[RMDB]
RNA sequence: GGGAACGACUCGAGUAGAGUCGAAAACGCUAGGAUUCAAUGUCCUCUCAUCAGCGGUUUGCGAUUAGCACAACUUGCUACCGGAUCUCACUACAAAAUCAGGUCAAUUCUUCAAGCAUUCAAUAUAUCCCCGAUGUGCAUUCGUGCACAUCGGGGAAAAAGAAACAACAACAACAAC
Reactivity to 2A3 in 0.01 (KOAc 150mM, MgCl2 10mM, bicine 150mM(pH8.5), 24C), signal-to-noise 2, nucleotides 027 to 126: c100g090c010u040a050g000g080a070u060u060c060a050a020u180g080u020c000c030u000c040u000c030a200u030c080a030g000c030g060g140u010u030u140g120c160g070a210u050u130a000g060c000a050c020a060a190c060u020u040g030c000u020a000c060c000g090g040a090u020c020u030c020a080c000u110a100c210a070a060a000a050u080c010a040g080g050u080c070a040a050u070u040c080u090u070c010a100a000g000c040a050u020u000c060a180a130u100a120u090a080
Description
This 177-nucleotide RNA was probed chemically with 2A3. The RNA was probed in 150 mM KOAc, 10 mM MgCl2 and 150 mM bicine (pH 8.5) at 24 C. For 2A3, 621 sequencing reads were counted. Values cover nucleotides 27 to 126.